Source information: This 207-nucleotide RNA was probed chemically with 2A3.
RNA sequence: GGGAACGACUCGAGUAGAGUCGAAAACAUAGCGUUUCACAAUGUGCGCCAUUAACAUUGUUUAUGCAAGCACGUUUCGCAAUGUACGGCGCAUAAACAUUGCCAACACAAAUACGCUUCACGAUGUAAAACAUCGGUGCGUUCGCGCACCGAUGAAGCAGAGGACCAAGUUCGCUUGGUCCUCUGCAAAAGAAACAACAACAACAAC
Reactivity to 2A3 in 0.01 (KOAc 150mM, MgCl2 10mM, bicine 150mM(pH8.5), 24C), signal-to-noise 1, nucleotides 027 to 156: c040a040u230a020g000c020g000u020u140u140c040a020c000a030a210u060g020u040g000c000g060c000c070a130u240u110a070a070c000a000u030u030g000u100u100u020a070u060g040c120a110a110g000c070a150c110g010u000u130u060c090g000c050a040a060u070g010u020a030c090g000g000c010g070c000a000u000a000a060a000c080a000u000u000g060c130c100a130a000c060a000c010a130a150a000u140a010c030g000c000u000u060c070a040c020g060a040u040g010u300a010a200a000a000c000a000u000c010g000g000u010g030c000g060u020u100c200g000c040g000c000a030c040c000g090a000u000g000a050a010